[RMDB]
RNA sequence: GGGAACGACUCGAGUAGAGUCGAAAAGUGAUGAGGUGGAGACUCACCGUGAGAACGGUGUAUAAGCGCCUUACUCGGCCUGCGCUUAUACUCAGGGAUAAUAUGAUUAUCCCUAUGUUCGCCGAGACUUGAGCUCUGUAUUCGUACAGGGUUCAAGAAAAGAAACAACAACAACAAC
Reactivity to 2A3 in 0.01 (KOAc 150mM, MgCl2 10mM, bicine 150mM(pH8.5), 24C), signal-to-noise 9, nucleotides 027 to 126: g130u100g040a130u050g020a040g030g050u080g040g080a070g030a050c010u010c050a020c000c000g010u030g010a080g010a050a020c020g020g010u030g010u020a000u000a010a000g000c000g010c010c000u020u070a120c000u010c010g010g000c010c020u010g000c000g000c000u020u010a010u000a010c100u110c120a010g000g000g030a000u010a020a030u160a210u300g200a100u080u010a000u010c000c000c000u030a100u090g100u020u090c030g000c010c000g000a010g000a010
Reactivity to DMS in 0.01 (KOAc 150mM, MgCl2 10mM, bicine 150mM(pH8.5), 24C), signal-to-noise 9, nucleotides 027 to 126: g020u010g010a080u010g000a060g010g020u000g000g010a130g000a130c110u000c050a050c010c010g010u000g000a190g000a140a040c030g010g010u000g010u000a010u000a010a010g010c000g010c010c120u000u010a090c020u000c010g000g010c010c180u000g000c000g000c010u000u000a010u000a010c040u000c170a040g000g000g000a010u000a010a020u000a140u010g010a090u000u000a010u000c000c000c000u000a020u010g010u000u010c130g010c000c010g010a030g010a300
Conditions: 150 mM KOAc, 10 mM MgCl2 and 150 mM bicine (pH 8.5), 24 C. The record gives the reactivity of an RNA of 177 nucleotides to 2A3 and DMS.